[RMDB]
Source: RMDB library OK3TST, as collected in RNAgym. Structure probing data (DMS and 2A3) for a 207-nucleotide construct. For 2A3 the reverse transcriptase was SuperScript II with manganese. Conditions: 150 mM KOAc, 10 mM MgCl2 and 150 mM bicine (pH 8.5), 24 C.
RNA sequence: GGGAACGACUCGAGUAGAGUCGAAAAGGGUAUUUACGGAACCCCUACGCCGUGUGGAGUCUUAUUCUAGACAGUGGGGACGAGGCCAUGAACAAGGUAGAUGAGAGAGGAGAUUUCUCCAUCCUGGUCAGGGAAUUUGUUAAAGACUGAUGAAAACAUACUGAACUAAGUUCGCUUAGUUCAGUAUAAAAGAAACAACAACAACAAC
Reactivity to DMS in 0.01 (KOAc 150mM, MgCl2 10mM, bicine 150mM(pH8.5), 24C), signal-to-noise 3, nucleotides 027 to 156: g000g040g030u000a060u010u010u000a210c090g020g000a130a130c030c010c000c010u000a080c060g030c040c040g060u000g000u010g030g020a090g030u010c070u010u000a110u010u000c090u000a070g010a110c060a170g040u010g000g000g040g020a130c080g010a120g020g010c040c050a170u020g000a070a110c050a090a080g010g040u000a070g020a130u000g000a160g030a060g020a130g020g020a120g000a190u000u000u000c020u000c020c030a060u000c030c040u000g000g020u000c040a110g020g000g000a050a100u000u000u000g010u000u010a050a070a130g010a110c060u010g000a150u000g000a090a050a070a070c130
Reactivity to 2A3 in 0.01 (KOAc 150mM, MgCl2 10mM, bicine 150mM(pH8.5), 24C), signal-to-noise 5, nucleotides 027 to 156: g040g000g000u060a060u100u150u130a050c060g020g020a040a080c020c000c000c010u050a040c050g040c050c060g070u100g020u070g040g060a050g030u030c030u110u180a200u240u050c040u050a040g020a110c030a070g040u030g030g010g000g000a000c080g010a020g020g010c040c050a070u110g010a060a040c030a090a020g060g020u080a020g040a110u090g020a020g000a000g010a030g180g010a100g030a080u070u120u030c010u000c000c000a040u050c000c010u040g040g010u060c050a030g030g030g000a020a060u110u080u080g050u040u100a060a060a040g040a050c040u040g030a060u070g060a110a100a010a000c060
The DMS profile rests on 5,667 reads. For 2A3, 3,431 sequencing reads were counted.